[RMDB]
RNA sequence: GGGAACGACUCGAGUAGAGUCGAAAACCGAAGCCCCAUUGAGGGAUAAAACAGGCUCUCCCAUCCAACUCCUAUUCCAACACGUCCUCGUCGUACAGAGUGGUAACAUGUGUCACCACAUAUCCAACAUAGUGUCGCAUCUUCGGAUGCGACACAACGACAGAAGAAGGUUCGCCUUCUUCUGUCGAAAAGAAACAACAACAACAAC
Reactivity to DMS in 0.01 (KOAc 150mM, MgCl2 10mM, bicine 150mM(pH8.5), 24C), signal-to-noise 1, nucleotides 027 to 156: c040c000g020a120a290g000c040c010c010c060a160u000u000g000a110g000g020g010a110u000a060a050a070a050c080a060g000g000c010u010c070u000c020c020c030a210u000c010c030a050a110c000u000c010c030u010a050u000u000c080c040a000a170c050a140c120g000u000c020c030u010c060g060u000c020g000u000a100c110a100g000a090g090u010g030g010u000a050a040c010a120u020g070u000g060u010c000a000c040c000a010c020a120u030a120u000c040c020a140a040c060a100u000a120g060u000g020u010c000g000c010a030u000c000u000u000c280g060g040a030u000g010c010g040a020c000a000c010a000a070
Reactivity to 2A3 in 0.01 (KOAc 150mM, MgCl2 10mM, bicine 150mM(pH8.5), 24C), signal-to-noise 2, nucleotides 027 to 156: c020c000g020a080a040g040c010c000c000c010a060u100u160g040a220g020g010g030a040u110a020a130a010a020c050a030g010g030c000u010c030u010c010c010c020a020u080c060c020a050a070c040u000c030c000u020a040u060u030c030c030a070a030c030a040c090g070u070c000c020u050c030g090u010c010g000u070a070c040a050g120a060g130u040g000g040u100a120a020c050a070u160g080u010g020u100c060a040c040c000a010c020a030u110a030u080c050c040a010a060c020a160u170a180g000u000g010u010c000g010c000a000u000c000u010u020c090g100g000a000u010g000c000g000a000c010a000c000a000a000

The data come from the RNA Mapping Database (RMDB), library M2RFPK. Structure probing data (DMS and 2A3) for a 207-nucleotide construct. For 2A3 the reverse transcriptase was SuperScript II with manganese. DMS adducts were read by reverse transcription with MarathonRT. For DMS, 1,373 sequencing reads were counted. Values cover nucleotides 27 to 156. The 2A3 profile rests on 1,221 reads. Conditions: 150 mM KOAc, 10 mM MgCl2 and 150 mM bicine (pH 8.5), 24 C.